[RMDB]
RNA sequence: GGGAACGACUCGAGUAGAGUCGAAAAAGUGACCUGCCGCUACCAUCAGUUCGUUAAUGGCUGAACGCCUCUAAGUCAGAAACGAUUCUAGAAACUGUAAAUUUACUGCUAAGAGCGUGGAUGUUGUUUAUCUCGAUUACUUCGGUAAUCGAGAUAAAAAAGAAACAACAACAACAAC
Reactivity to 2A3 in 0.01 (KOAc 150mM, MgCl2 10mM, bicine 150mM(pH8.5), 24C), signal-to-noise 1, nucleotides 027 to 126: a000g020u040g030a070c030c000u000g010c000c000g000c000u010a020c010c000a120u030c000a060g070u190u050c010g010u000u090a070a000u200g010g030c000u000g050a000a000c000g050c020c000u000c000u040a010a010g000u000c090a000g100a020a000a040c000g000a140u060u060c070u140a140g010a040a090a020c010u070g000u040a000a020a130u000u220u160a040c000u020g120c060u100a110a070g000a000g210c010g000u050g090g120a090u060g100u000u050g000u000
Reactivity to DMS in 0.01 (KOAc 150mM, MgCl2 10mM, bicine 150mM(pH8.5), 24C), signal-to-noise 1, nucleotides 027 to 126: a090g000u000g000a060c010c000u000g020c000c010g070c030u010a030c050c060a120u000c100a010g000u010u000c060g010u000u030a060a100u000g000g030c000u000g000a050a080c160g010c030c000u010c010u010a050a040g000u020c010a070g000a080a040a060c050g000a150u010u020c130u000a130g000a060a050a080c010u000g020u000a010a120a050u030u020u000a050c070u010g020c030u000a050a090g000a090g000c020g020u000g010g000a080u000g030u030u000g000u010